This 177-nucleotide RNA was probed chemically with 2A3 and DMS. The RNA was probed in 150 mM KOAc, 10 mM MgCl2 and 150 mM bicine (pH 8.5) at 24 C. For DMS, 797 sequencing reads were counted. Reactivities are given for positions 27 through 126. Source: RMDB library OK2TST, as collected in RNAgym. The 2A3 profile rests on 583 reads.

RNA sequence: GGGAACGACUCGAGUAGAGUCGAAAAAUGGAACCCACGUUCUGCGUUAGGACUGUUACCAGCAAUCUCGUAAGAGACAGUGGUUGGCUCGGAUUCGGAAGCCUGUUCGAACUUGACAACACCAGAGCACCCCGUGGAGUUUCGACUCCACGGGGUGAAAAGAAACAACAACAACAAC
Reactivity to 2A3 in 0.01 (KOAc 150mM, MgCl2 10mM, bicine 150mM(pH8.5), 24C), signal-to-noise 1, nucleotides 027 to 126: a000u200g090g060a080a090c000c020c000a030c040g020u060u000c020u030g090c000g080u000u110a050g080g060a060c030u040g070u180u090a070c000c030a000g090c050a030a020u050c000u030c030g100u130a140a000g020a000g040a010c030a080g150u040g060g020u020u040g020g000c000u070c000g080g060a170u230u010c000g040g060a080a030g100c010c060u120g070u020u030c020g030a050a010c040u080u140g020a040c020a080a000c000a020c030c000a000g010a000g010
Reactivity to DMS in 0.01 (KOAc 150mM, MgCl2 10mM, bicine 150mM(pH8.5), 24C), signal-to-noise 1, nucleotides 027 to 126: a120u000g010g010a130a120c010c030c000a230c150g000u000u000c010u010g000c120g020u000u010a110g030g010a100c080u000g000u000u000a090c050c060a090g010c060a110a160u000c020u010c020g020u010a140a100g010a060g020a040c100a120g020u000g020g020u000u000g010g010c090u000c070g020g020a180u010u000c100g000g020a120a100g000c060c090u000g030u010u000c020g010a130a030c080u000u000g010a020c070a050a010c090a050c010c030a100g010a050g030